Chemical mapping of a 177-nucleotide RNA with DMS and 2A3. The reactions ran in a buffer of 150 mM KOAc, 10 mM MgCl2 and 150 mM bicine (pH 8.5), at 24 C. Values cover nucleotides 27 to 126.
RNA sequence: GGGAACGACUCGAGUAGAGUCGAAAACACCACGCGCUUCACCGGCGAGGGCAGCGUCUCUGUCAUCACCCGCCAGGAGGGUGAGGACUUCAGCACAGGGCCAUUUGAGGACGAGGAGACGAGGGCGGUACUACAUGCGAUUCGUCGCAUGUAGUACAAAAGAAACAACAACAACAAC
Reactivity to DMS in 0.01 (KOAc 150mM, MgCl2 10mM, bicine 150mM(pH8.5), 24C), signal-to-noise 4, nucleotides 027 to 126: c110a220c060c030a160c120g030c030g040c050u000u010c060a100c060c050g000g000c050g000a090g010g010g010c050a060g000c090g020u000c050u000c070u010g010u000c010a080u000c010a000c000c010c000g020c120c120a160g010g010a140g000g010g010u010g010a030g000g020a040c010u000u010c080a090g030c100a070c080a090g010g010g020c020c040a100u010u010u000g010a100g010g000a070c040g000a110g020g010a080g010a040c080g000a100g010g010g020c110g000
Reactivity to 2A3 in 0.01 (KOAc 150mM, MgCl2 10mM, bicine 150mM(pH8.5), 24C), signal-to-noise 3, nucleotides 027 to 126: c060a030c010c000a000c040g090c010g020c000u080u080c030a030c050c020g000g000c050g020a050g010g040g000c030a010g010c030g090u030c030u010c010u060g030u020c010a020u030c010a040c010c010c020g070c080c080a140g090g130a060g020g070g010u010g000a010g000g020a020c000u100u040c100a050g020c050a040c020a080g000g060g000c000c020a070u050u070u180g040a040g000g030a020c010g030a030g040g010a040g000a010c040g010a060g020g050g000c050g040